[RMDB]
RNA sequence: GGGAACGACUCGAGUAGAGUCGAAAACGGCAAAAAAGCAAACUUGACCACCAAGGAUAAAAGAGAUCUUAUCCAAGGAUGCAAAAGAUAAGCUCACUUUUGACACCCACUGAUCUCGAACUUAAAGAAAACCGAGACUACUUCGGUAGUCUCGGAAGAGAUAGAACAUCUUCGGAUGUUCUAUCUCAAAAGAAACAACAACAACAAC
Reactivity to DMS in 0.01 (KOAc 150mM, MgCl2 10mM, bicine 150mM(pH8.5), 24C), signal-to-noise 2, nucleotides 027 to 156: c160g000g010c040a000a030a060a030a010a080g010c020a050a160a080c050u010u050g010a300c110c010a080c040c000a110a300g030g010a090u020a070a050a060a090g030a190g010a090u010c020u000u000a060u000c020c020a020a300g060g000a090u000g030c050a030a010a080a050g030a090u010a080a130g030c030u000c030a130c040u000u000u000u000g000a200c040a100c000c030c020a160c150u000g000a030u000c040u010c020g000a050a090c080u010u020a040a060a150g000a070a040a090a060c000c000g010a010g030a010c010u010a000c000u000u000c280g020g000u000a010g030u000c000u040c010g000g010a000a000
Reactivity to 2A3 in 0.01 (KOAc 150mM, MgCl2 10mM, bicine 150mM(pH8.5), 24C), signal-to-noise 6, nucleotides 027 to 156: c030g060g000c000a010a010a030a020a030a020g070c070a130a100a070c050u080u100g040a080c030c010a020c020c010a040a040g010g000a020u030a000a050a040a020g080a000g010a030u030c010u020u030a010u000c020c010a000a030g020g010a040u050g000c010a050a080a060a040g030a070u120a140a040g010c010u020c020a040c020u020u030u010u010g060a060c010a050c010c020c000a040c090u070g040a070u040c020u030c050g060a130a100c080u120u140a180a080a080g080a030a100a040a030c000c000g000a000g010a000c000u000a000c000u030u030c110g060g000u000a000g000u000c000u010c000g000g000a000a000
Source: RMDB library M2RFPK, as collected in RNAgym. Structure probing data (DMS and 2A3) for a 207-nucleotide construct. Reactivities are given for positions 27 through 156. The DMS profile rests on 2,726 reads. DMS adducts were read by reverse transcription with MarathonRT.